RNA sequence: GGGAACGACUCGAGUAGAGUCGAAAAAGAUAUGGAGUCACGCUGGAGCUCCCUUUAAUGUAUGGUCGGAAACGACCAUACCUUGAUGUGUAGGAUAGGAGCGUUGAAAGCGGAGACUCCUAAGUCACUACAAUACACGGUUCGCCGUGUAUUGUAGAAAAGAAACAACAACAACAAC
Reactivity to DMS in 0.01 (KOAc 150mM, MgCl2 10mM, bicine 150mM(pH8.5), 24C), signal-to-noise 4, nucleotides 027 to 126: a070g000a060u010a300u000g000g010a020g010u000c010a070c010g000c020u000g010g000a110g020c000u000c000c000c020u000u000u010a030a020u000g010u000a000u000g000g020u000c000g020g000a130a090a200c000g000a010c000c000a000u000a000c000c080u010u000g010a050u000g010u010g020u010a160g010g020a230u020a130g000g000a020g010c010g000u000u010g000a090a110a040g000c000g000g010a180g000a010c000u000c000c000u000a010a070g010u000c050a280
Reactivity to 2A3 in 0.01 (KOAc 150mM, MgCl2 10mM, bicine 150mM(pH8.5), 24C), signal-to-noise 4, nucleotides 027 to 126: a000g040a010u080a020u100g010g000a000g000u010c000a000c010g020c000u000g040g000a010g000c000u010c010c000c000u070u130u090a070a040u140g000u010a000u010g010g000u000c010g020g020a040a030a040c000g010a000c010c010a000u000a000c000c000u040u080g080a130u070g170u080g150u300a120g130g180a070u110a220g030g010a010g000c010g050u180u040g030a010a000a020g000c020g000g010a090g000a040c000u000c000c000u000a000a000g000u010c000a000
Annotation: The data come from the RNA Mapping Database (RMDB), library TTRDES. Chemical mapping of a 177-nucleotide RNA with DMS and 2A3. DMS adducts were read by reverse transcription with MarathonRT. For 2A3 the reverse transcriptase was SuperScript II with manganese. Values cover nucleotides 27 to 126. The reactions ran in a buffer of 150 mM KOAc, 10 mM MgCl2 and 150 mM bicine (pH 8.5), at 24 C.